[RMDB]
RNA sequence: GGGAACGACUCGAGUAGAGUCGAAAACGCGCGUGAGGCGCACGUAAGCGGGCAGCGCGACGAUCGCGAUCGCGAACAUCGUGUUGGUGAGGCCCGGGCCGAUGAUCGCGACGACCGCGACGGCGAAUCGCUGCUGCGUAUUCGUACGCAGCAGCGAAAAAGAAACAACAACAACAAC
Reactivity to DMS in 0.01 (KOAc 150mM, MgCl2 10mM, bicine 150mM(pH8.5), 24C), signal-to-noise 2, nucleotides 027 to 126: c070g000c100g020c010g010u010g020a130g010g000c050g020c020a020c090g010u000a090a090g020c000g000g010g000c080a140g020c050g000c000g000a070c050g010a060u000c000g000c010g010a150u000c020g030c000g000a020a100c040a030u010c020g020u000g000u000u000g000g000u000g000a120g040g030c000c010c060g020g000g010c050c020g010a080u000g010a070u000c030g010c010g030a080c080g030a100c190c000g010c000g000a040c060g020g000c020g000a110a140
Reactivity to 2A3 in 0.01 (KOAc 150mM, MgCl2 10mM, bicine 150mM(pH8.5), 24C), signal-to-noise 1, nucleotides 027 to 126: c030g030c000g000c000g000u100g090a170g120g070c060g040c010a000c020g100u110a210a040g060c040g030g040g000c010a030g000c020g020c020g010a020c010g210a200u070c000g000c010g030a040u040c030g020c010g020a010a020c010a020u030c010g030u020g060u200u100g060g040u130g060a080g070g050c010c060c070g010g020g000c010c000g000a030u040g010a020u010c000g010c000g040a030c020g090a050c000c070g000c000g000a000c000g000g000c020g020a090a020